[RMDB]
RNA sequence: GGGAACGACUCGAGUAGAGUCGAAAACCGAUUCCCUUCGGGGAAUCGGAAAGAAAGCACGAAAAUAAAAUAAAGGCAAAGGGAACGUGCACCCACCCAUAAAAAGAACCAUCUUCGGAUGGUUCAAGUAGAAAACUAACUUCGGUUAGUUUUCUACAAAAGAAACAACAACAACAAC
Reactivity to DMS in 0.01 (KOAc 150mM, MgCl2 10mM, bicine 150mM(pH8.5), 24C), signal-to-noise 1, nucleotides 027 to 126: c010c000g000a010u000u000c000c020c000u040u020c250g030g010g010g010a000a000u000c050g000g000a010a040a050g020a110a100a110g060c040a010c000g000a170a130a060a030u000a070a070a150a020u000a070a170a090g020g050c170a060a090a160g010g000g000a080a100c000g000u010g010c010a270c000c000c020a150c050c000c030a190u000a070a100a020a090a140g000a010a000c000c000a010u000c000u000u000c100g040g000a010u000g000g000u000u000c000a020a050
Reactivity to 2A3 in 0.01 (KOAc 150mM, MgCl2 10mM, bicine 150mM(pH8.5), 24C), signal-to-noise 2, nucleotides 027 to 126: c000c000g000a000u000u030c010c010c030u000u020c210g020g000g000g000a000a000u000c000g000g000a000a000a010g020a020a060a000g000c020a000c020g110a270a170a080a040u260a060a110a080a040u290a120a180a080g170g020c060a060a050a090g050g010g000a090a020c020g010u000g000c020a100c000c000c000a020c000c030c000a050u170a110a090a000a010a080g010a010a000c000c000a000u000c000u020u060c280g080g000a000u000g010g000u010u000c000a010a000